Background: This 170-nucleotide RNA was probed chemically with DMS and 2A3. 2A3 adducts were read by reverse transcription with SuperScript II with manganese. Values cover nucleotides 27 to 129.
RNA sequence: GGGAACGACUCGAGUAGAGUCGAAAAAUGGGCCGCUUCCGGCGAACGAGCCCGAAGAGCGAGUGGGGGAGAACUCCCGAGAGUUGGGAGACAGAAAGAGGGCGAGUGAUCUCGGAAGGAAUCCCCCUUAUACUGACGUUCGCGUCAGUAAAAAGAAACAACAACAACAAC
Reactivity to DMS in 0.01 (KOAc 150mM, MgCl2 10mM, bicine 150mM(pH8.5), 24C), signal-to-noise 9, nucleotides 027 to 129: a060u000g020g020g030c030c020g040c120u020u010c040c050g030g030c080g030a060a090c100g020a130g020c080c010c010g020a060a050g000a080g000c100g030a090g030u050g020g020g040g000g050a070g040a130a230c030u020c050c030c000g000a060g010a020g030u010u010g000g000g000a040g020a090c150a090g000a050a040a040g010a090g000g000g030c090g020a100g020u050g040a100u020c030u020c020g000g000a060a040g020g030a100a200u020c020c010c010c010c000u000u000a000
Reactivity to 2A3 in 0.01 (KOAc 150mM, MgCl2 10mM, bicine 150mM(pH8.5), 24C), signal-to-noise 4, nucleotides 027 to 129: a000u090g000g010g000c000c000g040c010u080u020c050c010g050g020c030g030a040a030c090g010a020g010c020c010c010g020a080a020g030a010g020c080g000a040g090u150g000g010g000g000g000a020g000a020a040c000u020c000c000c000g010a040g000a010g060u110u110g040g010g010a020g010a020c000a010g120a020a070a000g070a070g010g000g050c040g010a030g020u100g020a030u010c020u010c020g000g010a040a010g010g010a040a070u050c000c000c000c000c000u000u040a070